Structure probing data (2A3 and DMS) for a 207-nucleotide construct. The DMS profile rests on 6,883 reads. For 2A3, 7,036 sequencing reads were counted. The reactions ran in a buffer of 150 mM KOAc, 10 mM MgCl2 and 150 mM bicine (pH 8.5), at 24 C. 2A3 adducts were read by reverse transcription with SuperScript II with manganese. Values cover nucleotides 27 to 156. For DMS the reverse transcriptase was MarathonRT.
RNA sequence: GGGAACGACUCGAGUAGAGUCGAAAAAUCUUUGAACGCUGGGUUGAAGAUCGCUCGUAAGGGAGGAUCCUGAAGCGCGCACGGGAUCCAUCGAUCUUACGAGCGACUUCAACCUGUGCUGAAGCGCGCACGGCAACCGAAAGGUGCGUUGAUGAUCACCUUUCAAUAUGUUCGCAUAUUGAAAGGUAAAAGAAACAACAACAACAAC
Reactivity to 2A3 in 0.01 (KOAc 150mM, MgCl2 10mM, bicine 150mM(pH8.5), 24C), signal-to-noise 3, nucleotides 027 to 156: a000u050c050u090u080u180g060a020a000c020g000c010u030g000g010g030u020u020g020a030a070g100a300u020c000g000c000u000c000g010u000a000a000g000g000g010a020g000g000a010u010c000c000u040g040a180a050g010c000g000c000g010c010a010c000g020g000g000a000u000c000c000a090u300c010g000a000u000c000u000u000a000c000g000a000g000c000g000a000c000u000u000c000a000a000c000c000u000g000u000g000c000u010g010a060a000g000c000g000c010g000c010a050c040g010g000c010a010a010c010c000g030a070a040a030g000g000u010g000c000g020u020u030g020a070u070g000a020u110c060
Reactivity to DMS in 0.01 (KOAc 150mM, MgCl2 10mM, bicine 150mM(pH8.5), 24C), signal-to-noise 2, nucleotides 027 to 156: a080u000c020u000u020u000g010a040a010c000g040c010u000g020g020g020u000u010g010a020a010g010a140u000c020g040c020u000c000g000u000a030a030g000g000g000a030g030g020a020u000c000c010u000g000a040a030g040c010g050c020g000c020a300c040g020g000g010a020u000c000c020a260u000c160g000a050u010c000u000u000a030c000g000a000g020c000g000a000c010u000u000c000a010a000c020c010u040g020u040g010c030u000g010a060a060g010c010g020c010g000c000a300c080g000g000c020a030a040c010c030g000a110a110a150g010g010u000g010c000g020u010u000g010a120u010g000a120u000c070